Background: Conditions: 150 mM KOAc, 10 mM MgCl2 and 150 mM bicine (pH 8.5), 24 C. An RNA of 177 nucleotides, treated with DMS and 2A3 and read out base by base. For 2A3 the reverse transcriptase was SuperScript II with manganese.

RNA sequence: GGGAACGACUCGAGUAGAGUCGAAAAGAGAACAUGCACGAUGAACAAGAUUGUCUACAGUACCGACCCGGCUGUGAUGGCCAAGCAGGUGGCUCCCAUCGCCCACCGUGAAUCCAUGCGUGAGUGGGAUGUUUUGCUCUUUCGAGAGCAAAACAUCAAAAGAAACAACAACAACAAC
Reactivity to DMS in 0.01 (KOAc 150mM, MgCl2 10mM, bicine 150mM(pH8.5), 24C), signal-to-noise 2, nucleotides 027 to 126: g010a120g010a050a050c150a070u000g000c040a080c050g020a050u010g000a100a120c090a070a130g000a110u010u000g010u010c020u000a070c040a050g030u020a060c100c050g000a140c040c030c100g000g000c050u000g000u000g020a090u000g020g030c020c030a060a070g000c060a080g010g040u010g010g020c040u010c020c010c030a120u010c080g000c050c000c010a040c030c040g010u000g000a100a090u000c060c050a030u000g010c090g020u000g000a100g030u000g000g000
Reactivity to 2A3 in 0.01 (KOAc 150mM, MgCl2 10mM, bicine 150mM(pH8.5), 24C), signal-to-noise 1, nucleotides 027 to 126: g060a020g020a020a040c040a040u130g000c020a030c040g120a050u110g030a120a030c030a050a060g060a100u000u150g010u000c000u110a070c020a060g010u100a120c000c070g050a050c000c020c000g040g000c050u070g040u080g120a110u170g050g010c000c000a020a000g020c000a010g050g000u010g000g000c050u080c030c010c000a010u030c030g030c000c000c010a010c020c010g000u010g000a020a050u060c050c020a030u120g080c000g060u020g010a070g010u100g000g030
The data come from the RNA Mapping Database (RMDB), library OK2TRN.